[RMDB]
RNA sequence: GGGAACGACUCGAGUAGAGUCGAAAACUCACUCAGUACGUUGAGUGAGAAUGCUUAAGCCUCAAUAAAGCUUGGCUUGAGUGCCUCAAGCAGAUAUAGACUGAAACAUUUAGUAUGGCCAAGCAGGGAGCAACGGCUCGAGUACGCUCGAGCCGAAUAUCAAAAUGGUGUUCGCACCAUUUUGAUAAAAAGAAACAACAACAACAAC
Reactivity to 2A3 in 0.01 (KOAc 150mM, MgCl2 10mM, bicine 150mM(pH8.5), 24C), signal-to-noise 4, nucleotides 027 to 156: c000u000c000a000c000u010c000a030g080u210a170c150g150u200u050g010a000g000u000g000a000g000a020a050u050g000c000u040u010a040a010g010c000c010u030c010a080a150u130a160a100a020g020c010u010u000g000g000c000u030u020g020a020g020u120g020c010c020u070c060a040a000g000c010a010g120a060u050a050u110a180g130a110c070u100g080a120a110a020c020a020u090u150u050a080g030u070a090u160g030g000c000c000a000a000g000c000a010g030g080g010a070g020c050a100a070c010g000g000c000u000c000g010a010g010u030a060c210g040c030u000c010g000a000g000c000c000g000a000a000
Reactivity to DMS in 0.01 (KOAc 150mM, MgCl2 10mM, bicine 150mM(pH8.5), 24C), signal-to-noise 2, nucleotides 027 to 156: c000u000c010a030c010u000c000a110g020u000a100c290g000u000u000g020a030g040u000g000a010g000a060a060u010g000c000u000u000a060a070g020c020c000u010c060a120a130u000a100a120a160g000c010u000u000g000g010c040u000u000g000a040g010u010g000c010c030u010c050a190a120g020c000a090g020a210u010a160u010a080g010a200c040u000g010a110a100a050c040a030u010u010u000a120g020u000a080u000g060g010c010c020a030a010g000c000a150g000g010g010a180g010c050a130a200c030g020g040c000u010c000g010a040g030u000a070c210g030c010u000c010g000a050g000c000c000g000a000a010